[RMDB]
RNA sequence: GGGAACGACUCGAGUAGAGUCGAAAAUUGCCGCGGCUGUCGUUUCCGUGGGGCACUGCUCUUUCAAUUUCUAUGCGCUGUCGUGGGCGGUCGCGAAGGUGAAUCUGUUCAGUUACUUGCACAAUGCCGUGACUGGUCCAUUCGUGGACCAGUCACGAAAAGAAACAACAACAACAAC
Reactivity to 2A3 in 0.01 (KOAc 150mM, MgCl2 10mM, bicine 150mM(pH8.5), 24C), signal-to-noise 1, nucleotides 027 to 126: u000u150g090c000c000g110c070g030g020c010u000g000u120c040g000u020u030u090c020c070g000u030g010g000g000g000c030a010c060u050g010c000u000c020u000u140u070c060a110a160u000u000u130c000u040a020u170g000c060g000c000u000g030u090c020g080u140g000g140g000c070g000g000u030c050g000c050g100a010a000g040g000u150g050a040a020u050c000u030g050u090u010c000a000g030u010u060a090c040u120u090g010c050a010c040a170a210u200g040c040

This 177-nucleotide RNA was probed chemically with 2A3. The reactions ran in a buffer of 150 mM KOAc, 10 mM MgCl2 and 150 mM bicine (pH 8.5), at 24 C.